[RMDB]
RNA sequence: GGGAACGACUCGAGUAGAGUCGAAAAGCUCUUGUCUGAUUUUCUAGUCAGUUAACUACACAGCUUGAUCUGGCGAGGAGAGGACCAGAUGAAAAACAGAAAGAGAUGCGUGGAGUUAAAAUUGGUACCCUUACGACAAUUUCGAUUGUCGUAAGGGAAAAGAAACAACAACAACAAC
Reactivity to 2A3 in 0.01 (KOAc 150mM, MgCl2 10mM, bicine 150mM(pH8.5), 24C), signal-to-noise 1, nucleotides 027 to 126: g000c000u000c000u050u060g170u020c020u030g070a120u050u000u130u000c030u090a040g000u020c040a060g010u050u060a020a010c010u070a040c020a020c020a080g070c000u000u110g030a010u060c010u020g000g000c010g010a090g120g050a070g020a040g000g040a000c030c000a020g010a030u050g040a050a020a040a020a000c010a020g070a030a110a000g050a000g020a020u060g020c030g050u040g000g000a020g000u030u070a040a080a110a140u140u080g010g040u040a060
Reactivity to DMS in 0.01 (KOAc 150mM, MgCl2 10mM, bicine 150mM(pH8.5), 24C), signal-to-noise 1, nucleotides 027 to 126: g010c020u000c030u000u000g050u020c030u010g000a040u000u000u010u010c090u000a050g020u000c060a030g020u020u000a030a070c080u000a060c080a130c130a130g050c050u000u010g000a040u010c010u010g020g010c040g050a060g000g000a060g000a110g000g000a130c000c030a090g000a030u000g020a050a020a060a030a050c080a100g010a080a050a080g000a050g000a030u000g050c110g010u000g000g000a090g010u000u000a020a030a090a150u050u000g010g000u010a180